The data come from the RNA Mapping Database (RMDB), library OK2TST. An RNA of 177 nucleotides, treated with DMS and 2A3 and read out base by base. For DMS the reverse transcriptase was MarathonRT. For 2A3 the reverse transcriptase was SuperScript II with manganese. For DMS, 1,473 sequencing reads were counted. Conditions: 150 mM KOAc, 10 mM MgCl2 and 150 mM bicine (pH 8.5), 24 C.
[RMDB]
RNA sequence: GGGAACGACUCGAGUAGAGUCGAAAAACAAAUUCAACCCCUUCUGUCGAACGACCAACUAGGUAAAACGACGGUGCCAGCACCACAAGGGUGGUACAAGAACUCUGAAGGUUUGAAAACCACACCCCAUUGGCCUUUAAUUCGUUAAAGGCCAAUGAAAAGAAACAACAACAACAAC
Reactivity to DMS in 0.01 (KOAc 150mM, MgCl2 10mM, bicine 150mM(pH8.5), 24C), signal-to-noise 3, nucleotides 027 to 126: a090c100a040a090a160u000u010c090a110a090c050c050c010c040u010u000c050u010g000u000c020g020a070a300c300g000a030c020c000a100a160c180u020a120g000g020u000a030a030a100a250c010g000a040c040g010g040u020g010c080c030a080g010c010a060c110c020a050c110a040a080g000g000g000u000g000g030u000a020c050a130a260g000a030a050c030u000c070u000g000a170a150g000g010u000u000u000g010a060a040a090a050c070c030a050c100a140c030c010c000
Reactivity to 2A3 in 0.01 (KOAc 150mM, MgCl2 10mM, bicine 150mM(pH8.5), 24C), signal-to-noise 2, nucleotides 027 to 126: a000c030a010a070a080u180u140c030a060a070c000c000c030c000u060u000c040u000g000u000c000g030a040a040c070g020a020c010c000a100a270c100u150a160g000g020u020a000a030a090a010c040g010a010c000g000g010u000g020c010c020a030g000c030a060c080c000a030c050a100a070g030g030g070u000g000g020u070a030c010a030a070g030a120a020c020u050c100u270g090a070a010g010g020u010u010u050g090a080a080a010a020c030c010a010c010a040c040c010c010